[RMDB]
RNA sequence: GGGAACGACUCGAGUAGAGUCGAAAAAGGAGUCGGCGGCGACCGAAGCGAGGAGGAAAGCAAAGAAAGCAACGGGGCUAGCGAGUGGAUGUUCCGCCUCCCCGGAGUCCCGAGUGAGGCUUAUCCCAACCGCCACAGUUCGCUGUGGCGAAAAGAAACAACAACAACAAC
Reactivity to DMS in 0.01 (KOAc 150mM, MgCl2 10mM, bicine 150mM(pH8.5), 24C), signal-to-noise 5, nucleotides 027 to 129: a030g000g000a040g030u020c000g000g060c000g030g040c040g020a170c040c030g020a130a070g040c110g000a050g010g030a050g010g010a030a060a080g050c010a020a060a130g020a060a060a040g000c040a100a090c080g000g000g000g000c070u000a040g040c080g010a140g040u040g030g020a150u050g030u070u060c080c080g010c130c070u010c010c010c020c040g030g000a100g010u050c030c030c040g010a090g010u040g020a050g040g020c030u030u020a040u000c000c000c000a140a130c140
Reactivity to 2A3 in 0.01 (KOAc 150mM, MgCl2 10mM, bicine 150mM(pH8.5), 24C), signal-to-noise 5, nucleotides 027 to 129: a010g090g000a020g020u030c030g010g030c020g020g030c050g040a080c010c010g000a010a000g050c030g030a040g010g000a020g010g000a030a040a010g010c030a010a010a080g050a030a090a000g040c000a020a020c000g010g000g020g010c010u040a020g100c010g020a050g040u190g020g030a090u050g060u140u040c040c020g030c020c030u030c020c000c000c000g010g010a040g020u020c040c020c000g020a020g000u100g010a010g010g020c000u050u030a020u050c010c000c000a000a010c030

Description: Chemical mapping of a 170-nucleotide RNA with DMS and 2A3. The RNA was probed in 150 mM KOAc, 10 mM MgCl2 and 150 mM bicine (pH 8.5) at 24 C. For 2A3 the reverse transcriptase was SuperScript II with manganese. The DMS profile rests on 16,128 reads.